Record summary:
Structure probing data (2A3 and DMS) for a 177-nucleotide construct. For DMS, 176,945 sequencing reads were counted. The RNA was probed in 150 mM KOAc, 10 mM MgCl2 and 150 mM bicine (pH 8.5) at 24 C. Values cover nucleotides 27 to 126. For DMS the reverse transcriptase was MarathonRT.
RNA sequence: GGGAACGACUCGAGUAGAGUCGAAAAGGAUGCAACGUAGUAAUAUGUGUGACGGGUACCUCUUGAGUUACGCAUUACUAUUCAUGAUGUCACUCAAGAGGUAGGUGACGUCAUGAAAUCUGCAUCGCUACAUGAGUGUAUUCGUACAUUCAUGUAGAAAAGAAACAACAACAACAAC
Reactivity to 2A3 in 0.01 (KOAc 150mM, MgCl2 10mM, bicine 150mM(pH8.5), 24C), signal-to-noise 9, nucleotides 027 to 126: g020g000a000u000g000c000a020a030c040g030u020a020g020u040a040a130u040a060u090g070u000g000u000g010a000c000g010g000g010u020a020c000c010u020c000u010u020g030a020g010u000u010a000c010g000c000a000u020u050a060c050u100a060u050u100c010a010u020g050a070u040g000u000c000a000c000u020c010a010a010g020a010g030g010u000a000g000g000u030g060a030c000g000u000c000a000u010g020a020a020a010u040c020u020g000c000a000u000c000g000
Reactivity to DMS in 0.01 (KOAc 150mM, MgCl2 10mM, bicine 150mM(pH8.5), 24C), signal-to-noise 9, nucleotides 027 to 126: g000g000a010u000g010c010a050a100c170g020u000a030g010u010a110a100u000a030u000g020u000g010u000g000a000c010g010g000g010u000a020c020c020u000c010u000u000g000a060g010u000u000a060c230g010c010a010u000u000a060c190u000a130u010u010c170a080u000g000a030u000g010u000c100a030c000u000c030a030a030g000a020g000g010u000a010g000g010u010g010a110c000g010u000c000a010u000g000a040a070a080u010c150u000g010c000a000u000c010g000